[RMDB]
RNA sequence: GGGAACGACUCGAGUAGAGUCGAAAACACGAAUAAACUCCUCUUCGUAACUAGGAAAAAGUUGUUUCAACAAACCCAUGUGCGCUUCAUCAUCGCCUUCGAUAAUAACAGCCUUUUCCUUGUAGAGCCUAAAUAUAUCGUUCGCGAUAUAUUUAGGAAAAGAAACAACAACAACAAC
Reactivity to 2A3 in 0.01 (KOAc 150mM, MgCl2 10mM, bicine 150mM(pH8.5), 24C), signal-to-noise 9, nucleotides 027 to 126: c060a010c030g060a050a050u210a150a120a040c050u050c020c010u040c020u080u050c030g070u060a060a050c040u050a100g020g070a030a030a030a030a030g000u010u010g020u010u050u070c100a120a100c050a080a100a060c020c020c020a050u090g050u060g040c030g000c030u090u070c030a090u040c010a020u050c030g020c010c000u070u060c050g050a050u060a190a030u090a090a050c010a020g010c000c000u020u020u000u000c000c000u020u050g070u070a080g020a020g080
Reactivity to DMS in 0.01 (KOAc 150mM, MgCl2 10mM, bicine 150mM(pH8.5), 24C), signal-to-noise 5, nucleotides 027 to 126: c120a060c050g010a040a060u020a050a080a060c080u010c030c000u010c070u000u010c020g010u010a100a130c080u000a070g000g010a030a020a010a050a080g020u000u000g020u000u000u010c090a080a100c180a050a100a110c080c020c010a070u010g020u010g020c050g010c050u000u010c060a070u000c070a050u010c060g020c020c020u010u000c040g000a060u030a040a040u040a070a090c080a040g000c000c030u010u000u010u000c000c000u000u000g010u030a100g010a090g010
This 177-nucleotide RNA was probed chemically with 2A3 and DMS. Values cover nucleotides 27 to 126. Source: RMDB library OK1LIB, as collected in RNAgym. For DMS the reverse transcriptase was MarathonRT. The reactions ran in a buffer of 150 mM KOAc, 10 mM MgCl2 and 150 mM bicine (pH 8.5), at 24 C.